Structure probing data (DMS and 2A3) for a 207-nucleotide construct. It was measured as part of the RMDB library OK3TST. Reactivities are given for positions 27 through 156. The 2A3 profile rests on 803 reads. The reactions ran in a buffer of 150 mM KOAc, 10 mM MgCl2 and 150 mM bicine (pH 8.5), at 24 C.

[RMDB]
RNA sequence: GGGAACGACUCGAGUAGAGUCGAAAACUCGCGAGCCCAUUGAGGCGUGGGGAGCGACAUGAAUCAGCCUCGAUUAGAUGUGGUCGACGGUACCGCGGCGUACAGCGACCUAGUUAGAAGCCGCAAAACCGGAAGAGAUGACGCUCGACGGACGUCAAUCACCUCAUGGUUUCGACCAUGAGGUGAUAAAAGAAACAACAACAACAAC
Reactivity to DMS in 0.01 (KOAc 150mM, MgCl2 10mM, bicine 150mM(pH8.5), 24C), signal-to-noise 1, nucleotides 027 to 156: c050u000c000g020c050g040a160g010c000c000c060a200u000u000g020a040g080g020c000g000u000g010g000g020g040a140g000c000g030a090c080a120u000g000a110a090u000c010a180g020c020c000u000c030g030a080u030u000a110g000a080u010g040u030g040g000u000c000g030a090c140g030g080u000a070c090c040g040c040g010g000c020g010u000a080c070a290g040c030g000a170c020c120u000a070g000u000u030a080g040a130a140g030c000c000g000c000a070a010a080a140c080c000g020g000a080a110g030a160g050a130u000g000a030c040g030c010u000c050g010a110c070g000g000a050c010g000u000c000a080
Reactivity to 2A3 in 0.01 (KOAc 150mM, MgCl2 10mM, bicine 150mM(pH8.5), 24C), signal-to-noise 2, nucleotides 027 to 156: c010u020c000g030c030g040a300g110c000c000c000a030u030u100g010a020g000g010c000g070u000g000g010g000g010a040g000c010g050a080c000a230u240g050a040a210u080c030a030g020c000c000u000c010g010a100u150u180a050g050a100u070g150u050g090g030u000c070g000a100c030g020g030u020a050c010c140g000c020g000g050c040g050u110a000c020a010g000c050g040a020c000c050u010a000g000u020u020a020g040a120a040g000c010c020g040c110a070a040a040a070c070c000g030g000a090a030g020a000g020a080u070g000a020c040g000c120u010c090g060a050c030g030g010a000c000g020u010c000a040